Chemical mapping of a 177-nucleotide RNA with 2A3 and DMS. Conditions: 150 mM KOAc, 10 mM MgCl2 and 150 mM bicine (pH 8.5), 24 C. The 2A3 profile rests on 1,607 reads. Source: RMDB library M2PK90, as collected in RNAgym. For DMS the reverse transcriptase was MarathonRT. Values cover nucleotides 27 to 126. 2A3 adducts were read by reverse transcription with SuperScript II with manganese.

RNA sequence: GGGAACGACUCGAGUAGAGUCGAAAAAUAAAUAUCAGUUAUAUGACUGACGGAACGUGGAAUAAACCACAUGAAGUAUAACGAUGACAAUGCCGACCGUCUGGGCGUUGCAUCCGCUCCAAAAAAACCAUCUACAAAGGUUCGCCUUUGUAGAUGGAAAAGAAACAACAACAACAAC
Reactivity to 2A3 in 0.01 (KOAc 150mM, MgCl2 10mM, bicine 150mM(pH8.5), 24C), signal-to-noise 2, nucleotides 027 to 126: a000u100a000a080a000u160a040u030c010a030g010u050u080a140u060a060u300g060a050c050u010g000a000c000g080g000a100a070c080g010u000g010g060a150a140u180a170a160a120c000c000a000c000a010u070g010a060a000g070u080a030u030a210a020c030g010a000u030g050a030c000a010a000u000g010c010c010g070a060c000c060g050u030c000u030g050g040g000c000g000u010u010g020c000a000u010c020c010g000c000u000c000c000a040a040a000a000a040a070a130
Reactivity to DMS in 0.01 (KOAc 150mM, MgCl2 10mM, bicine 150mM(pH8.5), 24C), signal-to-noise 1, nucleotides 027 to 126: a080u000a070a060a040u000a050u000c010a070g000u000u010a070u000a020u000g000a130c110u030g000a040c030g020g000a150a040c190g050u010g000g000a190a100u010a070a090a120c010c000a020c010a210u000g010a040a150g030u000a070u000a020a020c060g010a000u000g000a070c030a000a000u000g020c010c000g010a130c030c020g050u000c050u000g030g010g000c000g020u010u000g010c000a040u000c030c020g000c070u000c050c080a020a000a040a080a000a160a140